[RMDB]
Conditions: 150 mM KOAc, 10 mM MgCl2 and 150 mM bicine (pH 8.5), 24 C. This 177-nucleotide RNA was probed chemically with DMS and 2A3.
RNA sequence: GGGAACGACUCGAGUAGAGUCGAAAAGAUAUGGAAGUUUCCCACCUAUCACAUCGAUCUCGGAAACGAGGGAGUGAAGGUGGGAGAACUUCCUAAGUCAAAAGGUGCAGGGUUCGCCCUGCACCAACCUGAUAAGCUACUUCGGUAGCUUAUCAGGAAAAGAAACAACAACAACAAC
Reactivity to DMS in 0.01 (KOAc 150mM, MgCl2 10mM, bicine 150mM(pH8.5), 24C), signal-to-noise 3, nucleotides 027 to 126: g010a030u010a300u000g000g010a010a010g000u010u010u000c000c000c000a000c000c000u010a180u000c000a000c020a300u000c160g000a040u010c010u010c000g000g000a130a100a140c010g000a020g000g010g010a020g040u000g010a020a020g000g020u010g010g010g000a000g010a000a000c010u000u000c010c000u020a020a100g010u010c050a060a080a060a100g000g000u000g000c010a010g000g000g050u000u010c280g010c000c000c000u000g000c010a000c000c020a000a010
Reactivity to 2A3 in 0.01 (KOAc 150mM, MgCl2 10mM, bicine 150mM(pH8.5), 24C), signal-to-noise 4, nucleotides 027 to 126: g000a020u090a030u210g010g000a000a010g000u010u010u040c070c040c000a010c010c010u300a300u300c000a020c040a160u300c040g060a100u050c020u020c010g030g040a070a100a100c020g010a010g020g010g000a030g010u020g000a010a010g020g010u010g000g030g010a040g010a010a000c000u000u020c000c000u020a090a020g040u040c030a000a000a040a210g010g000u000g000c000a010g030g040g030u050u150c190g170c010c000c000u000g000c010a000c000c000a010a000
It was measured as part of the RMDB library TTRDEL.